An RNA of 177 nucleotides, treated with 2A3 and DMS and read out base by base. It was measured as part of the RMDB libraries RFM100 and RFMREP. The RNA was probed in 150 mM KOAc, 10 mM MgCl2 and 150 mM bicine (pH 8.5) at 24 C.
RNA sequence: GGGAACGACUCGAGUAGAGUCGAAAAAUCCAAGCGUCGAAACUGUAUGAAAACAAGGUUUUAGUUUCACCACAUCACGUUCACCUUUUGCUUUACAUGUAUCGCGAAAUGUAAACACUUAUUCAACGAAGACAAACGAAUUCGUUCGUUUGUCUUCAAAAGAAACAACAACAACAAC
Reactivity to 2A3 in 0.01 (KOAc 150mM, MgCl2 10mM, bicine 150mM(pH8.5), 24C), signal-to-noise 6, nucleotides 027 to 126: a000u050c020c000a040a030g060c020g070u060c070g040a030a020a030c020u060g030u160a100u130g190a060a040a020a080c080a070a090g080g030u040u040u030u080a030g000u030u060u050c030a060c050c000a040c010a060u110c030a010c070g030u040u040c020a120c030c010u020u040u080u110g030c030u030u080u050a010c000a030u080g070u120a080u140c050g000c010g080a030a090a030u070g000u060a000a060a000c040a020c060u060u140a100u290u140c050a080a030c050
Reactivity to DMS in 0.01 (KOAc 150mM, MgCl2 10mM, bicine 150mM(pH8.5), 24C), signal-to-noise 4, nucleotides 027 to 126: a110u030c020c000a100a090g000c050g010u000c070g010a090a020a040c050u000g000u000a050u000g010a060a050a060a130c110a100a160g010g020u010u010u000u010a050g000u000u010u010c030a100c060c040a050c130a050u010c100a050c080g000u000u000c030a070c020c020u000u000u000u000g030c110u000u000u000a010c030a050u000g030u010a030u010c080g010c040g020a040a040a010u020g000u010a020a070a040c070a080c190u000u000a130u000u000c070a060a120c150